RNA sequence: GGGAACGACUCGAGUAGAGUCGAAAAGAGUACACGAGAGAGUACGAGAGUGAUCGAACACGUGAUCUCUCACUCGUACUCACGAGUGUGUUCUCGUGAUCUCGUUCGAACACACGUACGUUCGAGAUCACUCUCGAACACGUGAGUUCGAUCGUACCCCUUUGCCCUCUUUCGAGAGGGCAAAGGGAAAAGAAACAACAACAACAAC
Reactivity to 2A3 in 0.01 (KOAc 150mM, MgCl2 10mM, bicine 150mM(pH8.5), 24C), signal-to-noise 1, nucleotides 027 to 156: g030a000g000u000a000c000a000c020g010a020g000a000g000a010g000u030a000c020g000a000g000a000g020u000g000a000u000c010g080a300a080c080a030c300g150u200g000a030u010c010u000c000u030c160a010c040u000c000g020u000a000c000u010c000a000c020g000a040g030u130g000u030g000u100u000c000u000c040g050u160g000a110u070c040u000c030g000u000u000c000g010a000a000c070a000c000a000c040g000u250a040c110g000u040u000c010g000a000g010a030u220c050a010c160u000c000u000c000g000a010a000c040a000c020g000u000g000a010g000u010u010c000g000a000u010c000g000u080a080c000
The record gives the reactivity of an RNA of 207 nucleotides to 2A3.
Reactivities are given for positions 27 through 156.
Conditions: 150 mM KOAc, 10 mM MgCl2 and 150 mM bicine (pH 8.5), 24 C.